The data come from the RNA Mapping Database (RMDB), library OK3TST. This 207-nucleotide RNA was probed chemically with 2A3 and DMS.
[RMDB]
RNA sequence: GGGAACGACUCGAGUAGAGUCGAAAAUGAAUCUCGCUAUGUGCUUAGCACUGAAAAAGAACUGGAUACCACUCUGUGGGUUGUCAGCCAGAAAAAUCCAGGAAGUGACGGUACAACAACUCUGACCAUGAGCGAAUACAGUGAUGACAUGUACGAACAAUUAGAGCCGAUUCGUCGGCUCUAAUUGAAAAGAAACAACAACAACAAC
Reactivity to 2A3 in 0.01 (KOAc 150mM, MgCl2 10mM, bicine 150mM(pH8.5), 24C), signal-to-noise 3, nucleotides 027 to 156: u080g020a030a050u020c010u010c020g010c050u040a060u070g050u030g000c020u070u210a070g020c030a020c040u080g050a070a110a030a050a030g070a070a010c010u010g000g020a020u050a120c000c060a050c030u160c050u130g040u130g050g000g020u060u050g030u070c040a020g010c050c010a030g090a020a040a010a000a000u010c030c000a010g020g040a050a040g010u020g030a020c020g030g000u040a020c030a070a030c020a030a030c070u000c040u180g090a140c070c010a090u110g040a000g050c050g060a020a020u070a070c070a000g010u010g130a030u050g020a060c010a130u080g000u040a060c030g030a070a020
Reactivity to DMS in 0.01 (KOAc 150mM, MgCl2 10mM, bicine 150mM(pH8.5), 24C), signal-to-noise 2, nucleotides 027 to 156: u030g000a120a120u000c020u000c030g030c110u010a070u010g010u000g010c040u000u010a080g030c000a060c070u000g000a020a080a070a090a090g000a100a100c000u000g000g030a100u000a100c050c010a040c030u000c080u000g050u000g010g000g000u000u000g030u000c030a180g000c090c060a170g030a020a030a060a070a140u020c010c000a050g000g010a120a070g040u000g000a100c090g000g050u000a080c020a050a100c080a060a030c030u000c020u000g000a120c070c080a070u000g000a110g000c030g000a080a120u000a070c060a090g020u010g010a110u000g000a060c010a120u000g000u000a060c080g000a040a130
The RNA was probed in 150 mM KOAc, 10 mM MgCl2 and 150 mM bicine (pH 8.5) at 24 C. For 2A3 the reverse transcriptase was SuperScript II with manganese.